[RMDB]
RNA sequence: GGGAACGACUCGAGUAGAGUCGAAAAGAUAUGGAGGUCCCAGAGUCCAAGAAUUUCGAUAAGAGCGCUGUCGGAAACGACAGAGUGGCUCUUUUGACGAAACUUGGACUCUGGGACCUCCUAAGUCGGUAAUAGUAAUGUUCGCAUUACUAUUACCAAAAGAAACAACAACAACAAC
Reactivity to DMS in 0.01 (KOAc 150mM, MgCl2 10mM, bicine 150mM(pH8.5), 24C), signal-to-noise 2, nucleotides 027 to 126: g010a080u000a300u010g000g000a010g020g000u000c000c000c000a010g010a030g020u000c000c000a000a020g000a120a210u000u000u000c000g010a180u010a020a010g000a020g030c000g000c000u000g000u000c000g010g000a170a100a240c000g000a020c000a000g000a020g030u000g010g010c000u000c000u000u000u000u000g000a270c130g000a000a020a080c000u000u000g000g000a010c000u010c010u000g010g000g000a000c000c000u000c000c000u000a010a050g010u010c100